[RMDB]
RNA sequence: GGGAACGACUCGAGUAGAGUCGAAAAGUUAAUCCGGUGCCCACGGUGUGGAUCACGUAGCGGCCGAUGAACCACAAGCCGGCGAUCAGUGAGAUACCGCAGGUGACCAUCAGUGCGGUUGGCACUGGUCCCGUGCUAGUUUCGACUAGCACGGGACAAAAGAAACAACAACAACAAC
Reactivity to DMS in 0.01 (KOAc 150mM, MgCl2 10mM, bicine 150mM(pH8.5), 24C), signal-to-noise 2, nucleotides 027 to 126: g000u000u010a120a160u010c020c010g020g020u000g000c020c020c020a160c040g010g030u020g000u010g000g020a150u000c000a030c030g050u010a100g010c060g000g000c100c020g000a140u000g000a080a090c040c040a030c050a090a130g000c030c000g000g000c080g020a080u000c050a150g020u020g000a190g000a140u000a070c020c010g000c020a050g020g020u010g000a090c110c090a070u010c040a040g000u000g000c000g020g000u010u010g010g000c010a000c010u000g000
Reactivity to 2A3 in 0.01 (KOAc 150mM, MgCl2 10mM, bicine 150mM(pH8.5), 24C), signal-to-noise 2, nucleotides 027 to 126: g050u060u060a100a180u070c030c030g030g020u020g020c000c000c000a000c000g000g000u050g020u010g030g100a120u020c020a010c060g050u050a050g080c040g080g000c010c000g050a080u080g000a040a050c010c020a030c060a050a020g070c020c030g060g030c020g030a040u070c020a060g080u020g070a170g040a080u080a040c000c020g040c020a030g000g100u040g100a050c070c010a090u210c070a010g030u050g050c000g150g000u020u010g060g040c000a020c000u010g060

Chemical mapping of a 177-nucleotide RNA with DMS and 2A3. Values cover nucleotides 27 to 126. 2A3 adducts were read by reverse transcription with SuperScript II with manganese. The 2A3 profile rests on 1,495 reads.